[RMDB]
RNA sequence: GGGAACGACUCGAGUAGAGUCGAAAAAGCCGCAUGGACAGGAUGGGAAAGCAUGCAUCGACGAUGGAUGGGAAAGCAUGCGGAUGGGAAAGCAUGCACCUACCGCCAUCCGAAACGUACGGAACCGCCAGCCGUACGGAAACCAUCCAUGACAGCACCGCUUGUAUUGUUUCGACAAUACAAGCGGAAAAGAAACAACAACAACAAC
Reactivity to DMS in 0.01 (KOAc 150mM, MgCl2 10mM, bicine 150mM(pH8.5), 24C), signal-to-noise 1, nucleotides 027 to 156: a140g050c010c020g020c050a010u000g000g000a110c050a130g000g030a060u010g000g020g050a160a070a270g030c010a050u010g020c000a220u000c160g000a110c110g040a060u000g050g000a140u000g020g000g010a070a130a120g040c050a020u030g030c010g000g000a090u010g030g050g040a030a120a160g020c000a000u000g000c010a120c060c030u000a140c010c010g000c010c000a010u000c020c000g020a050a080a150c000g050u000a040c010g020g030a090a170c000c100g030c140c040a260g000c050c000g050u000a010c000g050g010a010a060a060c000c010a000u000c000c040a060u010g020a130c040a080g050c110a220
Reactivity to 2A3 in 0.01 (KOAc 150mM, MgCl2 10mM, bicine 150mM(pH8.5), 24C), signal-to-noise 4, nucleotides 027 to 156: a010g030c040c010g000c020a020u020g010g040a040c100a140g010g010a010u020g000g000g060a080a060a000g010c000a010u030g010c010a050u130c100g120a110c060g040a030u020g000g000a010u010g000g010g040a070a070a020g010c010a000u020g000c020g040g000a090u110g040g030g030a020a040a010g000c000a000u000g010c000a080c000c030u060a090c020c000g020c010c000a000u000c000c000g000a040a020a000c000g000u000a000c000g000g040a070a120c080c050g060c100c030a020g010c000c000g000u000a000c000g000g010a030a030a000c000c000a000u000c000c000a000u030g020a030c020a030g040c030a020